[RMDB]
RNA sequence: GGGAACGACUCGAGUAGAGUCGAAAAGCCACGAUGAGUAAACAGUGGGACUGAAUUUCAACCCUAGUUGGUUUGAACCCCAAAGCUAGAGCCUUAAGUAUCUGCUACCUGGUGAGGUGGUGGUUAGUAUCCCAUUUGCUAGCUGAGUCAGCUGAGGGGUACAGAAGGAUUUCGAUCCUUCUGUACCAAAAGAAACAACAACAACAAC
Reactivity to DMS in 0.01 (KOAc 150mM, MgCl2 10mM, bicine 150mM(pH8.5), 24C), signal-to-noise 2, nucleotides 027 to 156: g030c000c030a070c050g010a130u000g020a190g020u000a110a040a120c080a100g040u000g010g000g020a180c030u010g000a080a110u000u000u020c040a080a130c020c000c050u010a120g020u000u000g050g010u020u020u010g010a090a130c090c040c010c030a090a110a120g020c030u000a060g000a110g010c030c020u000u000a060a100g010u000a060u000c010u020g020c030u010a040c020c010u000g050g070u000g000a120g010g020u000g050g050u010g030g020u010u000a080g020u000a160u000c020c010c010a120u000u000u000g000c020u010a090g000c020u000g000a120g020u000c090a140g000c050u010g020a160g010g000
Reactivity to 2A3 in 0.01 (KOAc 150mM, MgCl2 10mM, bicine 150mM(pH8.5), 24C), signal-to-noise 3, nucleotides 027 to 156: g030c020c000a020c040g050a060u130g020a020g090u130a100a090a120c080a050g020u050g010g010g100a070c030u060g040a060a140u040u090u110c030a050a040c000c000c020u050a050g030u090u110g070g010u060u030u120g040a030a040c000c000c000c020a040a130a000g000c020u080a010g000a000g090c010c060u100u070a090a020g040u030a070u090c020u010g010c000u010a030c000c020u080g110g040u140g110a040g050g000u030g020g000u010g010g030u020u010a020g030u030a050u070c010c020c020a010u140u070u070g030c010u010a050g000c010u000g020a020g090u100c030a000g020c040u020g060a070g000g080